[RMDB]
Structure probing data (DMS) for a 207-nucleotide construct.
For DMS, 2,305 sequencing reads were counted.
The RNA was probed in 150 mM KOAc, 10 mM MgCl2 and 150 mM bicine (pH 8.5) at 24 C.

RNA sequence: GGGAACGACUCGAGUAGAGUCGAAAAGUAUCCCUAGAUGAUAAAAUACCGCACAUGGCUCGUAAGAGCGGUUAAAUUAGCAAGUAAUGCAAAUUACGCGAGGUAACGCAUGGCCUAGGCUCGUUAGAAAAGGGAGAAUCCUUCGGGAUUCUCCCAAUCGUACUAAGAGGUUCGCCUCUUAGUACGAAAAAGAAACAACAACAACAAC
Reactivity to DMS in 0.01 (KOAc 150mM, MgCl2 10mM, bicine 150mM(pH8.5), 24C), signal-to-noise 2, nucleotides 027 to 156: g010u000a110u000c000c000c010u000a180g010a160u010g010a130u000a020a050a100a290u010a030c000c000g000c070a170c070a150u000g050g000c040u000c090g000u040a120a080g010a080g030c020g000g000u000u000a050a100a130u000u020a130g020c050a140a170g000u000a040a030u000g000c100a070a070a110u000u000a060c090g020c050g000a050g040g030u010a050a090c060g000c060a070u000g010g000c010c010u030a140g060g020c030u000c070g010u010u010a060g000a060a020a090a190g000g010g000a040g000a050a010u000c000c010u000u000c300g030g030g000a000u000u000c000u000c010c010c000a040a000